[RMDB]
RNA sequence: GGGAACGACUCGAGUAGAGUCGAAAAUUAGAGCUCGCCCGAGCACUGCGGCAACAGCUCGGACGAACUAUUGUGACCGUCUUGCACGAUCUACAACAGGCUGUUAGAUAUGCCGACCAUCUUAUUGUGAUGAAAGGUGGCGCAGUCUAUGCCGAAACAUUUAAUCACCCUUCGGGGUGAUUAAAUGAAAAGAAACAACAACAACAAC
Reactivity to DMS in 0.01 (KOAc 150mM, MgCl2 10mM, bicine 150mM(pH8.5), 24C), signal-to-noise 2, nucleotides 027 to 156: u010u000a150g020a070g030c010u000c050g040c000c010c000g030a080g030c010a110c060u020g030c030g020g040c080a050a120c040a050g030c000u010c000g000g010a080c020g010a000a010c000u000a130u000u010g010u010g000a020c000c010g030u000c020u000u010g080c060a090c020g000a010u000c010u000a080c040a070a040c110a120g010g050c020u010g010u000u000a060g040a060u010a110u000g000c010c050g000a120c010c010a010u010c000u020u000a130u000u010g040u030g020a160u020g010a070a040a030g030g000u010g000g030c010g040c000a050g020u000c050u000a080u000g010c040c020g000a120a080a140
Reactivity to 2A3 in 0.01 (KOAc 150mM, MgCl2 10mM, bicine 150mM(pH8.5), 24C), signal-to-noise 5, nucleotides 027 to 156: u070u030a020g020a020g120c010u000c010g000c020c010c000g010a010g030c060a030c170u120g040c070g160g000c020a090a040c020a210g010c010u040c020g000g000a000c000g010a020a020c040u070a110u090u180g060u030g030a050c010c020g060u040c030u100u250g020c100a040c080g060a070u020c080u220a060c050a110a020c000a120g010g000c020u060g050u170u040a000g000a050u160a210u200g020c060c020g140a220c000c000a000u010c010u020u100a150u230u270g120u140g090a200u100g040a100a050a010g020g000u020g000g000c000g000c000a000g000u020c000u030a050u080g000c020c010g010a050a070a000
Chemical mapping of a 207-nucleotide RNA with DMS and 2A3.
It was measured as part of the RMDB library OK3TST.
For 2A3, 2,324 sequencing reads were counted.
For 2A3 the reverse transcriptase was SuperScript II with manganese.
For DMS, 3,519 sequencing reads were counted.